[RMDB]
RNA sequence: GGGAACGACUCGAGUAGAGUCGAAAAAGCAGGCAUGAGUGUUCAUCAGAGGGCUUGUGGAGGGUGUUUGGCUAUGUGAUGGGUGUGUCUGUGAGAGGAAGCCCACAGUGUCUUCUCUCUGAGAAUGAACGUCUCUAGAGUUCGCUCUAGAGACGUUAAAAGAAACAACAACAACAAC
Reactivity to 2A3 in 0.01 (KOAc 150mM, MgCl2 10mM, bicine 150mM(pH8.5), 24C), signal-to-noise 1, nucleotides 027 to 126: a030g040c060a050g090g000c040a020u060g030a030g220u080g120u060u130c100a180u010c000a040g060a050g140g000g050c070u210u220g030u060g020g080a070g080g010g000u080g170u050u170u120g140g040c080u080a070u180g110u050g030a100u040g010g070g010u040g000u000g000u000c050u050g040u000g040a020g000a010g020g020a000a040g020c000c100c000a060c040a020g050u100g050u080c000u040u010c030u000c020u010c040u120g000a040g090a180a060u190g030
Reactivity to DMS in 0.01 (KOAc 150mM, MgCl2 10mM, bicine 150mM(pH8.5), 24C), signal-to-noise 1, nucleotides 027 to 126: a080g010c050a040g010g010c050a060u000g000a090g000u010g000u000u010c090a110u000c110a060g030a090g020g020g010c080u020u020g030u000g010g000a130g000g000g010u000g000u030u000u000g010g000c090u010a070u020g010u000g010a070u000g000g000g020u000g020u000g000u000c000u000g010u040g000a090g040a040g020g000a010a070g020c030c040c080a060c170a140g010u000g010u010c030u000u000c010u000c020u000c060u010g010a060g010a080a130u010g000
This 177-nucleotide RNA was probed chemically with 2A3 and DMS. For 2A3, 613 sequencing reads were counted. For 2A3 the reverse transcriptase was SuperScript II with manganese. The DMS profile rests on 1,781 reads. 2A3 is a SHAPE reagent: it acylates the 2'-hydroxyl of flexible nucleotides of all four kinds. Reactivities are given for positions 27 through 126.